Source: RMDB library OK2TST, as collected in RNAgym. The record gives the reactivity of an RNA of 177 nucleotides to DMS and 2A3. For 2A3, 1,694 sequencing reads were counted. DMS adducts were read by reverse transcription with MarathonRT. The RNA was probed in 150 mM KOAc, 10 mM MgCl2 and 150 mM bicine (pH 8.5) at 24 C. 2A3 adducts were read by reverse transcription with SuperScript II with manganese.
RNA sequence: GGGAACGACUCGAGUAGAGUCGAAAAAUAAACUGUUAACUAUGGUCCUACCAAGUUUGACGCUGUUCCUGCUGGCUGUGUGUGUGGGCGUCUAUGUGUGGCUUCAUAAUCUUUCCUGUACAUAUUACUUGUGCUAUACUUUCGAGUAUAGCACAAGAAAAGAAACAACAACAACAAC
Reactivity to DMS in 0.01 (KOAc 150mM, MgCl2 10mM, bicine 150mM(pH8.5), 24C), signal-to-noise 4, nucleotides 027 to 126: a060u010a090a060a080c110u010g010u000u010a040a060c040u010a120u000g020g010u000c110c100u010a180c030c030a050a050g010u000u000u000g030a050c030g020c120u000g010u000u000c020c010u010g040c040u000g020g010c050u000g000u010g040u010g010u010g000u000g020g000g030c070g000u000c050u000a050u010g000u000g010u000g020g000c040u000u000c040a030u010a060a060u000c050u000u000u000c020c020u000g010u010a080c140a080u000a100u000u010a140
Reactivity to 2A3 in 0.01 (KOAc 150mM, MgCl2 10mM, bicine 150mM(pH8.5), 24C), signal-to-noise 2, nucleotides 027 to 126: a000u190a030a090a010c060u050g040u100u080a000a030c020u040a100u240g040g000u090c040c030u010a080c010c040a120a030g020u030u050u130g030a020c010g000c070u030g060u090u000c000c000u000g040c040u060g030g020c020u030g030u000g020u010g010u020g000u060g090g070g000c010g040u000c070u080a080u080g110u000g010u020g010g000c000u020u030c070a060u080a190a090u080c060u030u020u010c000c010u020g080u130a080c050a090u220a070u240u130a080